Chemical mapping of a 207-nucleotide RNA with DMS and 2A3. For DMS, 1,378 sequencing reads were counted.
[RMDB]
RNA sequence: GGGAACGACUCGAGUAGAGUCGAAAAGUCCCCAGUAUGACGUUGAACUGCUGACUCAUACAUACUGACACCGGUUGCUCAACAGGCUGUGUGGGACAAUAGAAUAACAAGGCUGUCAAUUUGAGCUAAAACUCCUCGGGGUUCGCCCCGAGGAGAACUAAGAUGUGUGGUUCGCCACACAUCUUAGAAAAGAAACAACAACAACAAC
Reactivity to DMS in 0.01 (KOAc 150mM, MgCl2 10mM, bicine 150mM(pH8.5), 24C), signal-to-noise 1, nucleotides 027 to 156: g010u010c020c000c010c020a120g000u000a020u010g030a090c090g000u000u000g030a150a180c010u000g030c130u010g010a090c080u000c020a050u000a050c030a060u000a070c030u000g020a060c070a160c040c070g000g000u010u000g000c010u010c040a080a170c070a060g020g130c070u000g060u020g010u000g000g060g020a170c050a040a100u000a180g020a100a090u020a100a160c060a060a110g060g040c020u000g030u000c030a040a200u000u000u000g050a080g050c000u000a050a070a090a130c000u000c000c000u010c010g010g010g020g000u020u000c270g010c020c000c000c030g010a010g040g000a000g050a000a040
Reactivity to 2A3 in 0.01 (KOAc 150mM, MgCl2 10mM, bicine 150mM(pH8.5), 24C), signal-to-noise 2, nucleotides 027 to 156: g090u040c000c000c000c010a000g010u020a020u020g050a040c090g020u030u040g060a120a050c030u180g020c040u050g130a050c010u020c020a010u010a090c010a020u050a040c020u040g060a080c020a050c120c040g090g000u070u080g000c040u030c050a050a050c040a070g090g020c010u000g010u000g000u070g200g000g010a020c060a010a070u160a080g120a080a080u110a150a000c010a060a050g070g000c030u020g040u060c030a060a080u140u020u100g010a020g000c010u010a030a010a080a140c010u000c000c000u000c010g000g000g000g020u050u000c110g080c000c000c030c000g010a010g000g000a000g000a000a000
High 2A3 reactivity points to a flexible backbone, as in loops and unpaired stretches. The RNA was probed in 150 mM KOAc, 10 mM MgCl2 and 150 mM bicine (pH 8.5) at 24 C. For 2A3, 914 sequencing reads were counted.